[RMDB]
RNA sequence: GGGAACGACUCGAGUAGAGUCGAAAAACGCCAGUACGCUGGCGAAAAAACAGAUUUCGGUAUCGCUAUAUCUCAUCGACAUUUGGACUUCUCCCAUCUACCUUGGCUAUCAAGUCGGGGUUUUUAAGAUUCGUGCGUACUUCGGUACGCACGAAUCAAAAGAAACAACAACAACAAC
Reactivity to 2A3 in 0.01 (KOAc 150mM, MgCl2 10mM, bicine 150mM(pH8.5), 24C), signal-to-noise 1, nucleotides 027 to 126: a000c000g000c000c000a000g000u000a000c220g020c070u000g000g000c000g110a060a010a000a000a000a000c050a000g070a050u030u000u010c030g040g000u020a040u160c000g010c120u080a060u000a070u240c130u010c090a070u000c040g020a020c010a010u080u080u100g050g000a020c050u060u010c070u010c000c010c020a000u000c030u050a010c000c000u000u150g000g000c000u070a080u300c110a220a000g000u020c000g000g000g000g000u000u220u000u000u000a180a090